[RMDB]
RNA sequence: GGGAACGACUCGAGUAGAGUCGAAAACAACAUGACUAUUUACCUCAUAAGCAACUUGAAUUUUCAUAGUAUAAUUAGCCAGUGGUUUUUCAAGUCUAAAGAACAGCCUUUGCCAUGCUAAAACAUGAUGAAGCAGUGACUCACUACAGAAGACAAAUAGGCUACCUAUAUUCGUAUAGGUAGCCUAAAAAGAAACAACAACAACAAC
Reactivity to 2A3 in 0.01 (KOAc 150mM, MgCl2 10mM, bicine 150mM(pH8.5), 24C), signal-to-noise 2, nucleotides 027 to 156: c020a010a000c000a130u090g040a040c020u120a040u220u120u090a050c010c020u080c030a090u080a100a070g020c020a050a040c030u040u070g020a120a080u040u070u120u210c070a050u040a050g010u090a080u040a270a100u150u070a010g050c030c030a020g020u020g040g000u020u030u000u010u090c050a000a040g000u000c040u130a100a090a030g060a030a030c020a050g050c000c010u010u090u030g000c020c000a020u020g010c040u090a040a090a090a010c000a020u040g000a030u050g010a050a000g000c020a010g030u010g090a020c000u040c050a030c000u130a030c050a030g090a020a040g110a080c080a030a070a080
Reactivity to DMS in 0.01 (KOAc 150mM, MgCl2 10mM, bicine 150mM(pH8.5), 24C), signal-to-noise 1, nucleotides 027 to 156: c020a060a020c090a060u010g020a150c020u000a090u000u010u000a030c020c040u010c030a100u000a090a110g040c060a050a070c060u000u010g010a100a080u000u000u000u030c030a090u020a150g000u010a040u000a070a120u010u000a100g010c020c010a040g070u000g010g000u000u000u000u000u010c010a030a070g010u030c030u000a070a100a120g020a090a060c030a140g000c070c040u010u010u000g020c000c010a030u000g030c020u000a080a060a040a040c070a070u010g010a150u010g010a050a000g000c040a170g000u020g020a080c020u010c010a050c020u010a120c030a130g010a100a050g000a090c030a010a100a210